[RMDB]
Source: RMDB library OK2TRN, as collected in RNAgym. Chemical mapping of a 177-nucleotide RNA with 2A3 and DMS. The 2A3 profile rests on 4,146 reads. Values cover nucleotides 27 to 126. The RNA was probed in 150 mM KOAc, 10 mM MgCl2 and 150 mM bicine (pH 8.5) at 24 C. For 2A3 the reverse transcriptase was SuperScript II with manganese. The DMS profile rests on 5,835 reads.

RNA sequence: GGGAACGACUCGAGUAGAGUCGAAAACCAGUGACAAGCCUCCUGGCUUUUAUAACUGGCACCAUGGAGCUGUACAGUAUGAGAACAAUAGGUUCACCGUACCACGGGGGGUCGGUGGAAAGGGUGACUAUUGUCCCUCAUUCGUGAGGGACAAUAGAAAAGAAACAACAACAACAAC
Reactivity to 2A3 in 0.01 (KOAc 150mM, MgCl2 10mM, bicine 150mM(pH8.5), 24C), signal-to-noise 3, nucleotides 027 to 126: c020c000a020g030u040g050a020c040a080a020g030c000c030u130c040c060u120g030g000c010u010u040u080u030a140u020a060a100c040u020g000g000c020a030c020c010a060u140g060g000a060g010c060u040g050u060a080c030a040g040u090a050u170g090a070g030a100a020c050a060a130u080a140g050g090u040u040c010a000c020c020g030u070a040c000c030a040c070g030g010g000g000g020g020u050c020g000g000u030g020g020a050a030a020g080g000g020u030g020a010
Reactivity to DMS in 0.01 (KOAc 150mM, MgCl2 10mM, bicine 150mM(pH8.5), 24C), signal-to-noise 5, nucleotides 027 to 126: c010c000a070g010u000g010a110c190a060a090g000c030c010u000c140c170u010g010g010c030u010u010u010u010a060u010a120a090c040u010g000g010c080a140c050c030a130u010g010g000a090g010c070u010g010u010a050c070a050g010u010a050u010g000a090g000a040a050c060a070a070u010a060g020g000u000u000c010a040c020c010g010u010a070c030c040a160c140g000g000g000g020g000g010u000c030g010g020u000g000g000a040a060a090g000g000g010u000g000a170